Structure probing data (DMS and 2A3) for a 207-nucleotide construct. The RNA was probed in 150 mM KOAc, 10 mM MgCl2 and 150 mM bicine (pH 8.5) at 24 C. Values cover nucleotides 27 to 156. DMS adducts were read by reverse transcription with MarathonRT.
RNA sequence: GGGAACGACUCGAGUAGAGUCGAAAAGGGGCUGAUUCUGGAUUCGACGGGAUUAGCGAAGUCCAAGGUGCACGUCGAGGUGCGGUAGGCCUCGUAAACAAACCGCAAAAAAAUAGUCGCAAACGACGAACAAUACGCUUUAGCAGCUUAAUAACCUGCAUAAGAUAAGGUUCGCCUUAUCUUAUGCAAAAGAAACAACAACAACAAC
Reactivity to DMS in 0.01 (KOAc 150mM, MgCl2 10mM, bicine 150mM(pH8.5), 24C), signal-to-noise 1, nucleotides 027 to 156: g010g020g000g010c000u000g020a100u000u010c030u060g020g040a170u000u020c010g010a100c050g000g020g010a030u000u000a130g000c000g000a080a070g030u020c040c020a090a120g010g020u000g060c000a100c010g070u010c050g030a080g020g010u020g000c030g020g000u000a270g000g000c000c010u010c100g000u000a050a070a090c070a010a170a100c000c010g010c010a010a010a000a060a010a030a070u000a100g000u000c030g100c010a170a070a200c050g020a040c020g000a030a150c060a080a240u010a050c020g000c070u010u000u000a170g040c010a060g000c050u030u000a100a090u000a050a110c110c070u000
Reactivity to 2A3 in 0.01 (KOAc 150mM, MgCl2 10mM, bicine 150mM(pH8.5), 24C), signal-to-noise 3, nucleotides 027 to 156: g000g010g010g030c020u020g020a020u080u010c010u000g010g060a070u060u040c030g040a030c030g030g000g020a030u050u070a030g030c040g040a040a020g060u010c050c030a020a030g050g000u060g020c040a010c030g050u030c020g070a010g000g020u040g000c000g000g000u020a040g030g040c000c000u000c010g030u110a030a010a020c030a010a040a000c010c000g000c000a060a010a000a000a000a040a120u140a040g020u010c010g000c110a090a090a080c070g040a010c000g020a040a000c030a030a070u210a070c050g010c010u080u030u080a050g030c040a010g000c030u070u070a070a040u110a150a100c020c040u020